[RMDB]
Structure probing data (2A3 and DMS) for a 207-nucleotide construct.
RNA sequence: GGGAACGACUCGAGUAGAGUCGAAAAUGAGAUAGCUAAAUCACCUCGGUAUGAUUAGGGUGAGACCUAGGAACCGUAGGGGUAUUCUCAAAUGAAGCUUUUGCAGUGACGCCCAUGUAAGUGGGAUAAGAACCAACCCACUUCGGUGGGUUGGUAACAUCCCCUUUACGUUCGCGUAAAGGGGAUGAAAAGAAACAACAACAACAAC
Reactivity to 2A3 in 0.01 (KOAc 150mM, MgCl2 10mM, bicine 150mM(pH8.5), 24C), signal-to-noise 3, nucleotides 027 to 156: u080g010a040g030a070u120a050g060c090u100a010a140a100u090c100a110c040c020u030c020g020g030u240a240u180g080a150u080u020a020g060g000g010u070g130a100g080a050c000c000u000a000g030g000a010a020c020c030g070u110a030g000g020g000g000u020a100u070u010c020u000c010a040a050a020u160g060a080a060g010c030u070u080u110u180g060c090a020g010u010g150a050c070g000c000c010c000a000u040g060u190a110a140g020u020g010g000g040a010u080a090a050g070a030a000c000c000a000a000c020c000c000a010c040u050u030c090g030g000u000g010g000g010u000u010g000g000u000a000a000
Reactivity to DMS in 0.01 (KOAc 150mM, MgCl2 10mM, bicine 150mM(pH8.5), 24C), signal-to-noise 1, nucleotides 027 to 156: u010g020a040g010a050u010a040g000c030u010a050a090a160u020c060a040c000c000u000c030g030g000u010a130u010g000a210u010u000a070g010g030g010u000g020a170g040a090c070c030u000a070g010g010a100a040c010c010g020u010a040g000g020g010g050u000a050u000u000c010u010c000a080a060a080u000g010a040a110g020c040u000u000u010u010g010c010a050g000u010g030a140c040g000c000c010c000a050u000g020u000a060a160g000u000g000g000g010a060u010a050a110g010a080a090c020c000a050a020c020c000c010a000c020u010u010c160g000g020u010g010g010g000u000u020g010g060u000a010a050
Description
For 2A3 the reverse transcriptase was SuperScript II with manganese. It was measured as part of the RMDB library M2RFPK.